[RMDB]
RNA sequence: GGGAACGACUCGAGUAGAGUCGAAAACACUACUACAGGACCAUCGAGGACCUGCGGGACAAGAUUCUUGGUGCCACCAUUGAGAACGCCAGGAUUGUCCUGCAGAUCAACAAUGCUCAACUGGCUGUAUUAGCAUUGUGUUCGCACAAUGCUAAUAAAAAGAAACAACAACAACAAC
Reactivity to 2A3 in 0.01 (KOAc 150mM, MgCl2 10mM, bicine 150mM(pH8.5), 24C), signal-to-noise 9, nucleotides 027 to 126: c040a020c040u200a030c030u050a020c040a040g040g050a070c010c000a040u070c060g020a040g020g070a010c000c000u000g000c000g000g000g000a000c010a020a030g060a300u090u030c010u010u030g010g010u030g050c060c050a110c040c050a210u150u300g070a150g020a250a030c010g000c000c000a000g000g010a010u010u010g000u000c000c000u000g000c000a000g000a000u010c000a010a050c030a040a100u140g020c010u020c040a060a090c060u020g060g020c010u030g010
Reactivity to DMS in 0.01 (KOAc 150mM, MgCl2 10mM, bicine 150mM(pH8.5), 24C), signal-to-noise 7, nucleotides 027 to 126: c110a130c120u030a090c120u020a100c020a030g000g010a090c080c010a010u010c130g010a060g010g000a030c050c000u000g010c000g000g010g000a020c010a030a050g010a130u030u000c010u000u010g010g010u000g000c060c110a150c130c080a210u020u040g010a110g000a200a290c020g000c010c010a000g000g000a030u000u000g000u000c000c000u000g000c000a000g010a040u000c020a060a050c160a060a040u020g010c050u010c040a050a100c090u000g010g020c040u010g010